[RMDB]
RNA sequence: GGGAACGACUCGAGUAGAGUCGAAAAACUUAUCGGGUACAGGUGGACGAGGUCAACUUCAAGCGAAACAUAGCAACUAUAUACUGUGACGAUUGCACAGAAUCGCAGCCAGCAUCAGUGAGUCCGCACCAGCAUAGUGAUUCGUCACUAUGCUGGUAAAAGAAACAACAACAACAAC
Reactivity to DMS in 0.01 (KOAc 150mM, MgCl2 10mM, bicine 150mM(pH8.5), 24C), signal-to-noise 5, nucleotides 027 to 126: a080c060u000u010a060u000c080g020g020g010u000a070c070a070g000g010u000g000g010a070c070g030a090g030g010u000c030a070a070c110u010u000c080a070a130g030c070g030a070a050a090c100a040u000a070g020c050a100a070c130u000a090u010a110u010a110c060u000g020u000g010a090c070g010a120u000u010g000c060a040c080a060g010a030a080u000c050g020c020a120g000c060c020a050g000c040a030u000c030a060g010u000g010a090g010u010c020c040g010c150
Reactivity to 2A3 in 0.01 (KOAc 150mM, MgCl2 10mM, bicine 150mM(pH8.5), 24C), signal-to-noise 4, nucleotides 027 to 126: a000c050u110u060a060u140c060g070g000g000u070a040c020a050g040g020u020g040g030a030c030g020a020g050g050u040c030a020a040c020u080u050c050a060a040g010c030g060a040a030a020c020a060u090a030g030c030a030a040c040u000a030u020a020u040a250c050u020g010u030g100a040c060g250a230u040u290g010c060a060c010a040g110a070a030u040c050g000c030a010g020c020c010a010g010c000a020u030c020a040g040u000g060a010g040u030c030c010g040c000